[RMDB]
RNA sequence: GGGAACGACUCGAGUAGAGUCGAAAAUAGAGUUUACUGAAUUGUCUUUUACUAAUUACAAGCUCCAGUCUCAGAUUGUAACUGGCCUUUUUAAAGAUUGCUCUAGAGAAACUUCUGGCCUCUCACCUCAGGUAAAACUUCGGUUUUACCAAAAGAAACAACAACAACAAC
Reactivity to 2A3 in 0.01 (KOAc 150mM, MgCl2 10mM, bicine 150mM(pH8.5), 24C), signal-to-noise 9, nucleotides 027 to 129: u150a000g070a010g060u060u090u040a050c020u030g020a030a030u180u070g030u040c020u000u060u030u060a130c080u100a060a180u200u100a090c060a110a060g000c020u010c020c010a040g150u040c020u010c020a080g040a260u080u100g030u020a010a020c000u010g020g010c010c010u140u160u040u040u160a080a100a020g060a060u100u130g020c010u010c010u060a030g000a000g030a120a070a030c000u060u030c010u030g080g000c010c000u010c010u010c000a040c010c010u040c050a020
Reactivity to DMS in 0.01 (KOAc 150mM, MgCl2 10mM, bicine 150mM(pH8.5), 24C), signal-to-noise 9, nucleotides 027 to 129: u020a090g000a080g040u020u030u000a070c050u030g000a040a050u060u030g040u020c000u030u010u020u040a030c120u010a000a090u060u030a130c180a100a080g000c020u020c030c060a060g010u060c020u040c000a090g030a070u020u040g030u010a020a020c000u020g010g010c170c010u020u040u030u030u040a040a070a050g030a040u020u020g030c020u010c050u030a080g020a120g030a090a120a060c040u000u000c040u000g040g020c000c000u000c030u060c000a090c050c040u030c070a100

This 170-nucleotide RNA was probed chemically with 2A3 and DMS. Reactivities are given for positions 27 through 129. Values are in units of 0.01, from 0 to 300, in steps of 10. It was measured as part of the RMDB library 15KLIB. The reactions ran in a buffer of 150 mM KOAc, 10 mM MgCl2 and 150 mM bicine (pH 8.5), at 24 C. 2A3 adducts were read by reverse transcription with SuperScript II with manganese. The DMS profile rests on 33,898 reads. The 2A3 profile rests on 44,182 reads.